Annotation
An RNA of 177 nucleotides, treated with 2A3 and DMS and read out base by base.

[RMDB]
RNA sequence: GGGAACGACUCGAGUAGAGUCGAAAAGAAAAUCGCAUGGCAGACGUCAUAGAUGGCACUAAUAUUGAUAACAUUGAAGUGAAUAUAAAAUAAUCAUGACAUUCUCUAAAUAGAAGCUGUCAUCGGAAAACUCAUGCCAGUUCGCUGGCAUGAGUUUAAAAGAAACAACAACAACAAC
Reactivity to 2A3 in 0.01 (KOAc 150mM, MgCl2 10mM, bicine 150mM(pH8.5), 24C), signal-to-noise 2, nucleotides 027 to 126: g140a000a000a030a000u120c000g040c160a000u000g000g000c000a090g090a220c070g000u030c000a000u000a030g090a000u030g010g000c000a000c000u020a000a090u000a000u060u140g060a150u010a140a290c110a110u000u200g000a160a000g000u020g000a050a000u140a050u110a090a140a000a070u220a100a070u020c000a000u000g000a050c000a060u070u010c070u000c030u100a300a280a300u300a050g020a090a000g000c000u000g000u010c000a000u000c000g000g000a000
Reactivity to DMS in 0.01 (KOAc 150mM, MgCl2 10mM, bicine 150mM(pH8.5), 24C), signal-to-noise 1, nucleotides 027 to 126: g000a010a120a040a070u110c020g070c110a000u040g020g000c000a000g000a250c070g000u000c010a050u000a070g000a030u000g010g020c030a010c100u010a170a070u000a040u040u020g050a200u040a090a060c300a000u140u000g000a240a300g000u020g000a000a130u060a190u130a010a070a060a230u070a050a000u000c090a010u000g000a280c000a120u010u030c020u000c070u000a040a060a080u020a080g040a170a170g020c190u000g060u000c000a000u020c000g000g000a030